[RMDB]
RNA sequence: GGGAACGACUCGAGUAGAGUCGAAAAAGCGAUGAUACGUCAUCGCAACGAUUGCCUGAUCGUAAAACAGGAGACGGCCGUGGCCGCGACCACGUAAAAAAGCGUAACGCGGUCUACGGACCACGAAAAAAGCGCGGAACGUUCGCGUUCCGCGCAACAUUAUAAACAUGUUCGCAUGUUUAUAAUGAAAAGAAACAACAACAACAAC
Reactivity to DMS in 0.01 (KOAc 150mM, MgCl2 10mM, bicine 150mM(pH8.5), 24C), signal-to-noise 1, nucleotides 027 to 156: a100g000c000g020a000u020g000a070u000a000c270g070u000c000a030u000c000g060c010a030a080c000g010a020u010u000g000c170c040u000g030a120u020c030g020u010a080a000a050a100c000a070g010g000a100g030a170c100g010g000c040c010g040u000g000g000c000c030g000c040g010a040c040c300a050c020g010u010a000a050a090a080a130a230g020c000g030u000a100a130c000g010c010g030g000u000c000u000a030c090g030g000a040c000c000a020c040g000a000a030a140a080a160a140g000c020g000c020g000g030a030a020c060g030u000u000c200g000c000g050u000u000c110c000g030c120g000c000a000a020
Reactivity to 2A3 in 0.01 (KOAc 150mM, MgCl2 10mM, bicine 150mM(pH8.5), 24C), signal-to-noise 3, nucleotides 027 to 156: a000g010c010g000a010u020g000a010u030a080c200g050u000c020a000u010c010g020c010a010a020c010g000a000u000u040g030c000c010u030g000a010u010c040g120u150a000a010a010a030c000a000g020g010a030g050a070c200g020g000c000c000g000u000g000g010c000c000g000c000g010a040c030c140a000c010g010u050a050a130a070a110a040a030g020c020g010u010a040a010c000g000c000g000g010u000c050u070a000c010g010g020a040c000c000a040c030g080a040a080a020a020a010a010g010c010g000c000g000g000a010a000c010g000u050u090c170g020c010g070u000u010c000c000g000c000g000c000a000a000
Source information: The data come from the RNA Mapping Database (RMDB), library M2RFPK. This 207-nucleotide RNA was probed chemically with DMS and 2A3. The RNA was probed in 150 mM KOAc, 10 mM MgCl2 and 150 mM bicine (pH 8.5) at 24 C.